[RMDB]
RNA sequence: GGGAACGACUCGAGUAGAGUCGAAAAGAUAUGGACACGGUAUGGGAGCUACUCGGAAACGAGAAUAGCUUUGAUCAUACGUGUCCUAAGUCAAACAUCCUCUCCGUCUUCGGACGGAGAGGAUGAAUCAUUCUCAAAGGUUCGCCUUUGAGAAUGAAAAAGAAACAACAACAACAAC
Reactivity to DMS in 0.01 (KOAc 150mM, MgCl2 10mM, bicine 150mM(pH8.5), 24C), signal-to-noise 3, nucleotides 027 to 126: g000a010u000a300u000g000g000a010c000a000c000g000g020u020a010u000g000g010g010a020g000c000u000a040c000u000c000g000g000a060a060a160c000g000a010g010a130a120u010a000g020c000u000u000u020g000a090u010c010a010u000a020c000g000u000g000u000c000c000u000a000a060g000u000c040a130a130a230c020a020u000c000c000u000c000u000c000c010g000u000c010u000u010c220g020g000a020c000g010g010a010g010a000g010g010a000u000g010a040a090
Reactivity to 2A3 in 0.01 (KOAc 150mM, MgCl2 10mM, bicine 150mM(pH8.5), 24C), signal-to-noise 3, nucleotides 027 to 126: g020a010u040a020u110g000g010a000c010a010c060g160g140u100a000u010g100g060g010a010g020c000u000a010c000u020c010g000g050a060a050a020c010g020a010g050a220a290u050a030g000c000u100u070u090g140a130u130c000a010u000a000c000g000u000g010u000c000c000u000a000a000g010u000c000a040a090a070c020a000u000c000c000u020c010u000c000c000g050u020c000u090u120c300g130g000a000c000g030g000a000g000a000g020g000a000u000g000a000a000

An RNA of 177 nucleotides, treated with DMS and 2A3 and read out base by base. Source: RMDB library TTRDEL, as collected in RNAgym. DMS adducts were read by reverse transcription with MarathonRT. For 2A3 the reverse transcriptase was SuperScript II with manganese.